The data come from the RNA Mapping Database (RMDB), library OK1LIB. The record gives the reactivity of an RNA of 177 nucleotides to 2A3 and DMS. For 2A3, 5,143 sequencing reads were counted. DMS (dimethyl sulfate) methylates the pairing face of unpaired adenines and cytosines. The reactions ran in a buffer of 150 mM KOAc, 10 mM MgCl2 and 150 mM bicine (pH 8.5), at 24 C.
[RMDB]
RNA sequence: GGGAACGACUCGAGUAGAGUCGAAAACGCAAUGACACAGUGGUGGAAGAAUCACAUGACUCUGACUGAUGAGGACGCACUCAAAGUGUUUAGAAAUAAGCGCUCUUCCAAGGCACUACUUAAUCCAGCUUCUGAACUAGUUCGCUAGUUCAGAAGCAAAAGAAACAACAACAACAAC
Reactivity to 2A3 in 0.01 (KOAc 150mM, MgCl2 10mM, bicine 150mM(pH8.5), 24C), signal-to-noise 6, nucleotides 027 to 126: c070g010c030a060a130u150g030a030c020a010c010a110g040u030g050g030u030g070g050a110a010g010a060a070u110c030a020c020a150u130g040a040c010u030c010u060g080a100c020u060g050a090u060g000a080g020g040a050c050g030c020a040c030u070c050a030a130a090g080u080g020u050u120u090a050g030a010a110a030u120a110a010g010c020g000c030u000c000u050u000c000c030a040a040g100g000c010a000c020u080a020c010u100u090a030a020u110c040c000a040
Reactivity to DMS in 0.01 (KOAc 150mM, MgCl2 10mM, bicine 150mM(pH8.5), 24C), signal-to-noise 2, nucleotides 027 to 126: c020g000c060a040a010u050g010a000c110a060c070a000g020u000g000g010u010g030g030a010a000g000a110a040u000c090a020c150a110u030g000a160c010u010c000u000g020a170c140u020g000a120u010g000a140g000g010a070c050g070c070a200c040u000c090a040a100a050g010u000g010u000u000u020a040g020a160a060a160u020a020a000g020c190g000c130u000c010u000u030c000c020a010a090g010g000c000a020c040u000a000c110u000u000a110a190u030c100c110a040